Source: RMDB library OK1LIB, as collected in RNAgym. Chemical mapping of a 177-nucleotide RNA with 2A3. Values cover nucleotides 27 to 126. The reactions ran in a buffer of 150 mM KOAc, 10 mM MgCl2 and 150 mM bicine (pH 8.5), at 24 C. For 2A3, 324 sequencing reads were counted.
RNA sequence: GGGAACGACUCGAGUAGAGUCGAAAACGUUGCAGGAAAUUGAGGGAUUAAUCAAGAUCCGAAACGCACUGGUACACCGUAAUGGCGUUACCGAAUCUCUUGAACCCGUGUAUAUCAGUUCGGAUAGCGGCUUGACCCUUUUCGAAGGGUCAAGCCGAAAAGAAACAACAACAACAAC
Reactivity to 2A3 in 0.01 (KOAc 150mM, MgCl2 10mM, bicine 150mM(pH8.5), 24C), signal-to-noise 1, nucleotides 027 to 126: c000g000u000u010g020c160a030g000g000a030a030a030u000u000g000a040g040g070g000a070u150u300a120a070u070c000a000a030g000a060u000c000c000g050a010a000a000c040g060c010a070c070u190g000g000u010a000c140a010c000c000g040u040a000a300u280g060g000c160g000u010u070a000c060c060g000a160a220u090c040u030c000u200u190g030a000a030c000c000c010g000u000g010u010a060u000a000u220c140a190g060u010u090c060g070g050a100u220a020g120